The record gives the reactivity of an RNA of 207 nucleotides to 2A3 and DMS. Conditions: 150 mM KOAc, 10 mM MgCl2 and 150 mM bicine (pH 8.5), 24 C. For DMS, 2,053 sequencing reads were counted.
RNA sequence: GGGAACGACUCGAGUAGAGUCGAAAAUGGGAACGUAUUCGUACGUUCCCAAAAAGGUUCCAUAGUGUAGCGGUUAUCACGUCUGCUUUACACGCAGAAGGUCCUGGGUUCGAGCCCCAGUGGAACCAAAACUGGUCAUGGAUUCGUCCAUGACCAGGAGUGAUCAGAUCUUCGGAUCUGAUCACUCAAAAGAAACAACAACAACAAC
Reactivity to 2A3 in 0.01 (KOAc 150mM, MgCl2 10mM, bicine 150mM(pH8.5), 24C), signal-to-noise 1, nucleotides 027 to 156: u100g000g000g000a010a000c000g000u010a000u040u070c080g030u030a030c000g020u010u020c020c000c000a000a010a010a000a000g020g000u020u000c010c000a000u050a030g010u010g020u020a040g070c130g190g120u180u080a070u130c010a000c080g030u010c000u020g020c000u060u120u140a070c100a050c130g000c020a020g000a010a000g020g000u080c000c000u010g000g000g000u020u000c010g020a020g000c000c000c050c000a020g000u000g010g000a000a000c000c020a080a000a000a010c000u000g010g000u000c000a000u000g010g010a010u030u030c160g090u040c070c000a000u000g000a000c000c010a000g000
Reactivity to DMS in 0.01 (KOAc 150mM, MgCl2 10mM, bicine 150mM(pH8.5), 24C), signal-to-noise 2, nucleotides 027 to 156: u000g000g030g000a000a000c000g030u000a020u010u010c270g030u010a000c010g030u000u000c010c000c020a010a010a020a070a060g050g010u010u000c000c010a120u000a120g010u010g040u000a080g000c060g020g020u050u010a140u020c090a050c080g000u010c000u000g000c010u010u000u000a160c240a160c300g000c010a050g000a110a070g000g000u000c040c020u000g000g000g010u000u000c030g000a300g000c080c010c020c000a100g020u030g020g030a020a020c020c000a010a010a060a210c010u000g020g000u000c000a020u000g010g010a110u000u000c280g010u000c010c000a020u000g000a010c010c020a000g000